[RMDB]
RNA sequence: GGGAACGACUCGAGUAGAGUCGAAAAAACACAGCAAAUAAAACGGAAAAGCCUGUGCCUUUGUGGAGGUUAUAUUCUGGUAGAGGAAGGUGUAAAGUACUAGGAUACACAUGUAGAUAUUCCGUGUCCAGGGUACGGAUUUCAGUCAGCAGCUGUCCUCAUGAAGGAAAUUCGUUUCCUUCAUGAGAAAAGAAACAACAACAACAAC
Reactivity to 2A3 in 0.01 (KOAc 150mM, MgCl2 10mM, bicine 150mM(pH8.5), 24C), signal-to-noise 4, nucleotides 027 to 156: a000a000c090a010c030a030g050c030a070a090a030u160a080a090a040a030c060g040g030a040a040a050a030g020c020c020u070g010u020g040c000c030u080u030u100g080u090g050g020a020g030g000u080u050a060u010a020u100u040c050u080g030g020u050a030g010a010g070g040a030a010g020g000u020g000u080a070a100a020g010u010a010c020u020a020g010g010a010u040a070c040a000c010a040u130g040u140a050g080a140u080a130u180u060c080c030g010u010g020u010c010c000a020g040g030g040u010a010c020g000g010a030u030u080u040c010a010g030u010c020a010g000c010a010g000c020u050g010u080c010
Reactivity to DMS in 0.01 (KOAc 150mM, MgCl2 10mM, bicine 150mM(pH8.5), 24C), signal-to-noise 3, nucleotides 027 to 156: a030a030c030a080c040a080g030c040a080a100a150u000a070a070a090a160c060g000g000a110a070a100a150g020c070c030u000g050u000g020c020c050u000u000u010g040u000g000g010a050g020g030u000u000a070u000a060u010u000c030u020g020g020u000a030g000a110g010g000a060a030g000g020u000g020u010a050a070a160g020u000a030c020u000a180g020g020a100u000a070c050a070c070a110u010g010u020a070g010a110u000a110u000u000c030c020g050u010g030u000c020c030a130g020g010g020u000a040c030g000g010a130u000u000u000c060a030g020u010c020a160g030c020a170g010c000u000g010u000c030
Notes: An RNA of 207 nucleotides, treated with 2A3 and DMS and read out base by base. 2A3 is a SHAPE reagent: it acylates the 2'-hydroxyl of flexible nucleotides of all four kinds. The RNA was probed in 150 mM KOAc, 10 mM MgCl2 and 150 mM bicine (pH 8.5) at 24 C. Values cover nucleotides 27 to 156. DMS adducts were read by reverse transcription with MarathonRT. The DMS profile rests on 6,585 reads.